[RMDB]
RNA sequence: GGGAACGACUCGAGUAGAGUCGAAAAAAAGGUCACGCUUAUGUGGCGGACAACGGCGACGUGAUGUUCGACGUCCCGACCGAUCCAACUUAUGGCGUGCUGUCGCGUCAGGAUCUCGACCAGCUGCUCCAAAUCGUACUUUCGAGUACGAUUUGGAAAAAGAAACAACAACAACAAC
Reactivity to 2A3 in 0.01 (KOAc 150mM, MgCl2 10mM, bicine 150mM(pH8.5), 24C), signal-to-noise 2, nucleotides 027 to 126: a000a000a000g110g030u100c060a060c030g070c020u100u070a090u250g110u110g050g030c040g030g020a040c080a140a040c040g020g000c140g000a000c030g040u050g070a110u180g170u120u170c070g060a010c000g000u010c000c000c010g020a000c030c030g020a020u000c020c030a040a090c090u140u110a110u270g000g010c010g010u040g020c080u090g040u140c010g000c000g050u030c040a030g000g030a050u000c020u020c050g030a030c010c020a030g010c050u080g010c030
Reactivity to DMS in 0.01 (KOAc 150mM, MgCl2 10mM, bicine 150mM(pH8.5), 24C), signal-to-noise 2, nucleotides 027 to 126: a060a070a040g010g000u000c010a030c020g030c040u000u000a070u010g020u010g000g000c050g010g020a140c120a110a100c000g030g020c130g040a030c030g040u000g000a150u000g030u000u020c080g010a030c030g000u000c010c010c030g000a110c060c040g000a080u010c000c000a100a080c160u000u000a100u000g000g000c030g020u000g000c120u010g030u000c110g010c070g010u000c030a090g000g000a040u000c020u000c040g000a080c120c060a090g000c110u010g000c100